Overview:
Source: RMDB library OK1LIB, as collected in RNAgym. Structure probing data (DMS and 2A3) for a 177-nucleotide construct. High 2A3 reactivity points to a flexible backbone, as in loops and unpaired stretches. The DMS profile rests on 48,182 reads. The RNA was probed in 150 mM KOAc, 10 mM MgCl2 and 150 mM bicine (pH 8.5) at 24 C. For DMS the reverse transcriptase was MarathonRT.
[RMDB]
RNA sequence: GGGAACGACUCGAGUAGAGUCGAAAAGAGCUUGAUGCUAGAUUGUUCUAAUUGGACAUUAGAACAUCUACUUUAACUUGUUAGAGUAGAAUGAUUAUGUUCAAUAUAUCGUAAAUCUAGCAUCAUAGAUAGUAUUGUGAUUCGUUACAGUGCUAUCAAAAGAAACAACAACAACAAC
Reactivity to DMS in 0.01 (KOAc 150mM, MgCl2 10mM, bicine 150mM(pH8.5), 24C), signal-to-noise 8, nucleotides 027 to 126: g000a130g010c110u000u000g000a010u000g000c000u000a000g000a010u000u000g010u020u010c070u010a060a030u000u000g000g000a010c010a010u000u020a030g010a070a130c070a030u010c000u000a000c000u000u000u000a000a010c030u030u020g020u000u010a010g010a000g000u000a000g000a010a020u000g000a110u010u000a020u000g010u000u010c010a010a010u010a090u030a090u030c190g010u010a060a010a010u000c000u000a000g000c000a000u000c000a000u020a050
Reactivity to 2A3 in 0.01 (KOAc 150mM, MgCl2 10mM, bicine 150mM(pH8.5), 24C), signal-to-noise 9, nucleotides 027 to 126: g080a010g040c050u040u030g000a000u000g000c000u000a000g000a010u010u070g110u270u110c040u080a070a020u000u000g000g000a000c000a010u060u070a060g080a110a020c000a010u000c000u000a000c000u000u010u010a030a020c030u060u160g040u080u030a000g000a000g000u000a000g010a060a040u010g010a020u020u030a000u010g000u000u000c000a000a000u070a010u020a040u130c090g060u070a020a010a000u000c000u000a000g000c000a000u000c000a000u000a000